[RMDB]
RNA sequence: GGGAACGACUCGAGUAGAGUCGAAAACAGCUUAUGCGAGGGGCGGGGUGUGCUCGCCUGUAGUCCCUGCCGUACGACCCGAAGCCGGGCGAUCUAGGCGGGGGCAGGGUGAAGCGGUGCGAAAGCGAACCAGGAUAAACUUCGGUUUAUCCUGGUUAAAAGAAACAACAACAACAAC
Reactivity to 2A3 in 0.01 (KOAc 150mM, MgCl2 10mM, bicine 150mM(pH8.5), 24C), signal-to-noise 5, nucleotides 027 to 126: c020a020g040c020u150u110a070u220g050c030g020a050g040g010g030g050c080g000g010g000g000u080g040u070g020c010u020c010g010c000c000u030g020u030a030g020u020c000c000c000u020g020c000c010g110u130a090c030g190a300c010c000c000g070a090a010g150c190c010g000g000g000c010g020a060u030c040u100a100g000g000c010g020g000g000g000g000c000a010g020g000g000u010g020a080a030g000c010g000g050u080g020c010g030a090a030a020g020c030g010
Reactivity to DMS in 0.01 (KOAc 150mM, MgCl2 10mM, bicine 150mM(pH8.5), 24C), signal-to-noise 5, nucleotides 027 to 126: c090a200g010c080u000u010a090u020g000c060g020a100g010g000g000g000c070g010g000g000g030u020g010u010g020c020u000c000g000c000c000u000g000u050a040g000u010c000c000c010u000g000c000c000g020u010a120c060g000a150c010c010c010g000a230a200g010c230c040g010g000g010c020g000a090u020c090u040a140g000g020c000g010g020g000g010g060c000a010g000g000g000u000g010a090a060g010c040g000g020u010g000c030g000a050a090a120g010c060g000

The record gives the reactivity of an RNA of 177 nucleotides to 2A3 and DMS. The data come from the RNA Mapping Database (RMDB), libraries RFM100 and RFMREP.